[RMDB]
RNA sequence: GGGAACGACUCGAGUAGAGUCGAAAAGUGCUACAGAAGAUGUAUGAUGGAUCCUGAGCCAACCGGUAGGAAGACUGUGCAGAUACACCAGACGAUGGAUAAACGAAAGGGUCCGAAUGUGGUGGAAACCCUUUCGUAGCUUCGGCUACGAAAGGGUAAAAGAAACAACAACAACAAC
Reactivity to DMS in 0.01 (KOAc 150mM, MgCl2 10mM, bicine 150mM(pH8.5), 24C), signal-to-noise 1, nucleotides 027 to 126: g020u000g040c100u020a050c000a030g000a130a100g000a080u010g000u060a080u080g000a220u010g010g000a100u000c000c000u010g000a250g000c010c030a110a210c050c100g020g000u020a230g000g000a150a130g000a060c050u000g030u010g000c110a080g000a030u020a140c110a030c060c000a060g020a070c090g000a130u100g020g000a050u040a100a080a080c160g000a060a030a010g000g000g000u000c060c000g000a020a030u010g000u000g020g000u000g000g020a070a000
Reactivity to 2A3 in 0.01 (KOAc 150mM, MgCl2 10mM, bicine 150mM(pH8.5), 24C), signal-to-noise 1, nucleotides 027 to 126: g160u120g100c020u110a160c000a070g110a090a110g140a120u300g000u020a210u000g160a000u000g070g000a000u000c000c000u000g000a000g020c000c000a000a180c000c000g000g090u120a080g000g050a100a000g030a140c090u000g020u090g150c020a140g000a070u120a160c160a040c040c070a000g030a170c030g000a000u150g230g000a240u280a100a230a000c070g000a000a030a000g000g080g000u000c000c000g000a180a110u000g000u020g000g000u000g000g030a040a000
Description: The record gives the reactivity of an RNA of 177 nucleotides to DMS and 2A3. Values cover nucleotides 27 to 126. For DMS, 1,302 sequencing reads were counted. For DMS the reverse transcriptase was MarathonRT. The reactions ran in a buffer of 150 mM KOAc, 10 mM MgCl2 and 150 mM bicine (pH 8.5), at 24 C. Source: RMDB library OK1LIB, as collected in RNAgym. For 2A3, 312 sequencing reads were counted.